[RMDB]
RNA sequence: GGGAACGACUCGAGUAGAGUCGAAAAGAAAUCGCCACCGAAGACGGGGCGUUCGAUGUCGGUGAGUUCGCGUACCACUACGAGUCGGAGACGAUCGCGUACGAAGCCGGCGGACUCGUCAGAGCCGCAGCUGCCUGGGAUUCGUCCCAGGCAGCUGAAAAGAAACAACAACAACAAC
Reactivity to 2A3 in 0.01 (KOAc 150mM, MgCl2 10mM, bicine 150mM(pH8.5), 24C), signal-to-noise 1, nucleotides 027 to 126: g000a010a040a030u090c040g010c010c030a160c040c040g040a140a030g190a100c060g030g000g000g030c040g010u020u010c030g030a050u070g060u060c000g000g000u140g060a050g020u060u030c020g040c010g010u010a060c010c000a020c060u100a050c100g050a040g050u060c030g020g050a060g070a070c070g010a020u050c030g010c000g050u000a000c010g020a000a060g010c030c070g000g000c030g000g020a050c010u010c000g060u070c050a040g020a020g040c000c060g000
Reactivity to DMS in 0.01 (KOAc 150mM, MgCl2 10mM, bicine 150mM(pH8.5), 24C), signal-to-noise 2, nucleotides 027 to 126: g010a050a110a090u010c040g000c010c010a060c030c010g020a180a140g030a110c070g000g000g010g010c020g060u010u000c070g010a140u010g020u010c010g000g000u000g000a300g000u000u000c020g030c020g020u000a120c130c000a230c130u010a090c110g000a060g020u000c030g000g000a070g000a190c120g020a050u000c020g040c000g020u000a020c010g000a140a160g020c100c030g000g010c000g010g000a040c000u000c030g000u010c180a130g000a060g000c040c030g000